Description
Structure probing data (2A3) for a 177-nucleotide construct. The RNA was probed in 150 mM KOAc, 10 mM MgCl2 and 150 mM bicine (pH 8.5) at 24 C. Reactivities are rounded to 0.1 and cut off at 0 and 3.
RNA sequence: GGGAACGACUCGAGUAGAGUCGAAAAGCACGUCCGGCAAGGCCCGUGCGAACACUUGAGCUCCGGCUUGGCCGCUCUUGUGGAUUAGGACGUUCUAGCUCCGGCUUGGCCGCUAGUUCGUCCGAAAAUGCUGGCCUGCAUUCGUGCAGGCCAGCAUAAAAGAAACAACAACAACAAC
Reactivity to 2A3 in 0.01 (KOAc 150mM, MgCl2 10mM, bicine 150mM(pH8.5), 24C), signal-to-noise 1, nucleotides 027 to 126: g000c000a020c000g030u000c060c090g030g050c030a090a120g130g080c000c220c070g050u070g000c020g060a040a000c000a040c000u000u030g000a000g000c070u030c030c050g140g000c060u100u080g200g070c000c000g010c000u010c020u000u000g000u000g070g000a030u000u070a160g000g000a000c000g030u000u000c000u000a000g000c040u070c080c110g140g000c100u190u280g170g000c030c040g000c000u000a000g020u000u000c020g000u040c000c050g010a000a000a000